[RMDB]
RNA sequence: GGGAACGACUCGAGUAGAGUCGAAAAGAUCAGUGUAGACAGUCUCUCCUCUUAUCGCCUGCUCUGAACUACAAGUUUCCUGGCCUCUCAGGCAAUGCUGAUGACACCCUUUCUCGAAAAUUGGAUGAUCUGAGUCUCUCCAGACAAGGAACAAGUACAGCAGCUAGUAUUUCGAUACUAGCUGCUGAAAAGAAACAACAACAACAAC
Reactivity to DMS in 0.01 (KOAc 150mM, MgCl2 10mM, bicine 150mM(pH8.5), 24C), signal-to-noise 2, nucleotides 027 to 156: g030a080u000c090a060g000u010g030u000a040g020a160c030a110g010u010c020u000c000u000c050c020u000c050u020u000a100u000c050g000c010c010u000g000c060u010c020u010g030a050a140c050u020a110c080a100a120g000u000u000u000c030c010u020g020g010c060c010u010c060u000c030a090g000g050c030a080a090u000g010c050u000g010a080u000g030a150c020a030c000c030c000u010u000u000c000u010c080g000a050a020a060a060u010u000g010g000a090u000g010a090u000c000u000g010a300g010u000c000u000c040u010c050c040a130g040a050c040a030a150g030g000a060a130c020a030a130g000u000a260
Reactivity to 2A3 in 0.01 (KOAc 150mM, MgCl2 10mM, bicine 150mM(pH8.5), 24C), signal-to-noise 3, nucleotides 027 to 156: g020a040u090c050a040g040u030g050u170a040g010a070c070a080g020u050c030u000c000u030c040c000u020c000u040u050a090u100c050g030c020c010u010g020c020u040c030u100g100a090a070c020u110a080c110a140a050g020u020u080u030c000c030u000g030g000c000c010u030c030u030c020a010g030g000c000a020a030u070g010c020u040g000a070u050g020a030c010a060c010c010c020u020u100u020c100u020c070g110a110a120a100a090u120u060g050g010a010u060g040a030u070c010u020g000a000g040u000c010u000c010u000c090c010a040g000a090c020a030a060g030g000a070a040c030a010a000g080u110a090